[RMDB]
RNA sequence: GGGAACGACUCGAGUAGAGUCGAAAAACGGCUGGCUACGGCCAGCCGAAUCGGGCCAAAGGCAGUUGCCCGACGACACAGGCGAUCGUUCGCCCAAGCGCUGCACACGACUAUACGUAGUCGUGAAUUGAUCACGCAACCUUCGGGUUGCGUGAAACGAUACCAUUCUCUUCGGAGAAUGGUAUCGAAAAGAAACAACAACAACAAC
Reactivity to 2A3 in 0.01 (KOAc 150mM, MgCl2 10mM, bicine 150mM(pH8.5), 24C), signal-to-noise 1, nucleotides 027 to 156: a000c000g010g030c000u000g010g000c000u040a070c260g120g020c010c000a020g000c020c000g000a000a000u010c000g010g010g040c050c050a130a160a100g170g060c030a030g020u150u120g000c000c010c000g000a000c010g000a000c000a000c050a080g240g000c030g030a040u040c030g080u030u020c030g260c030c000c010a100a070g050c080g040c100u100g000c010a000c010a000c010g010a000c010u010a010u080a060c270g130u040a010g000u010c000g010u010g010a030a010u090u070g110a020u040c000a000c000g000c000a000a000c000c000u060u030c120g140g030g000u010u000g010c010g000u000g000a000a000a000